RNA sequence: GGGAACGACUCGAGUAGAGUCGAAAACUUCGCAACUUCGGUUGCGAAGAAUGGCAGCUGGUCCCGGCGCUGGGUUCGCCGGGUUAUAAAACAUAACACAUCACUGGCUACCAUUCGUGGUAGCCAAGUCAUAGCAUCCUUUCGAGGAUGCUAUGACAAAAGAAACAACAACAACAAC
Reactivity to DMS in 0.01 (KOAc 150mM, MgCl2 10mM, bicine 150mM(pH8.5), 24C), signal-to-noise 1, nucleotides 027 to 126: c000u010u010c010g000c000a010a000c010u010u000c170g030g000u000u010g000c010g020a000a000g010a050a060u010g000g000c060a050g020c020u010g000g000u000c000c000c000g000g010c010g030c140u000g000g010g020u010u000c020g010c010c010g010g010g010u020u000a010u010a010a040a070a060c150a050u000a060a020c040a050c120a100u030c160a090c200u000g010g000c000u000a020c000c000a020u000u020c170g030u010g000g020u000a000g000c000c000a000a010
Reactivity to 2A3 in 0.01 (KOAc 150mM, MgCl2 10mM, bicine 150mM(pH8.5), 24C), signal-to-noise 1, nucleotides 027 to 126: c000u000u020c010g000c000a000a020c020u030u080c280g090g020u000u000g040c000g000a000a000g010a010a010u050g030g050c050a020g020c060u080g070g050u050c020c000c010g010g000c010g010c050u130g110g050g060u040u020c010g000c000c000g040g000g000u010u030a090u040a010a050a010a040c050a090u150a120a040c060a000c000a100u160c040a050c120u070g000g000c000u000a000c010c000a000u010u080c270g090u050g000g000u000a000g000c000c000a000a000